[RMDB]
RNA sequence: GGGAACGACUCGAGUAGAGUCGAAAACUAGGCCGUACUGGAUCCGGAGCUCUGUCGGCAGGCCUCGUGACCUAUAUGUUCAUUCUGAAAGGCGCGUUCGGGCCGGGUCGGCACACGGUCUGGGCCGUGACGCACGCUAGUUCGCUAGCGUGCGUCAAAAAGAAACAACAACAACAAC
Reactivity to 2A3 in 0.01 (KOAc 150mM, MgCl2 10mM, bicine 150mM(pH8.5), 24C), signal-to-noise 2, nucleotides 027 to 126: c030u010a030g010g070c020c000g120u200a080c110u100g110g010a070u020c050c000g090g000a030g040c050u060c010u250g030u010c010g010g000c010a070g020g010c000c040u050c030g010u080g190a300c010c000u110a090u000a050u230g040u030u120c070a070u190u040c010u040g110a240a060a030g010g010c000g000c000g000u080u150c100g030g040g000c000c000g000g130g000u000c000g040g040c010a020c030a000c000g000g020u000c010u020g100g020g000c020c010g030
Reactivity to DMS in 0.01 (KOAc 150mM, MgCl2 10mM, bicine 150mM(pH8.5), 24C), signal-to-noise 1, nucleotides 027 to 126: c050u000a090g000g000c060c010g040u000a110c130u020g030g010a040u040c050c000g040g010a070g000c190u000c110u020g010u070c080g030g000c010a170g000g000c010c040u000c060g060u010g010a170c000c010u000a070u010a130u090g070u010u010c230a080u000u010c130u000g000a060a300a040g030g010c100g000c010g060u040u020c150g000g000g070c060c030g020g090g120u000c010g020g000c160a080c040a130c040g000g010u010c000u020g000g000g010c010c000g020
The record gives the reactivity of an RNA of 177 nucleotides to 2A3 and DMS. The reactions ran in a buffer of 150 mM KOAc, 10 mM MgCl2 and 150 mM bicine (pH 8.5), at 24 C. 2A3 adducts were read by reverse transcription with SuperScript II with manganese. The data come from the RNA Mapping Database (RMDB), library OK1LIB. DMS adducts were read by reverse transcription with MarathonRT.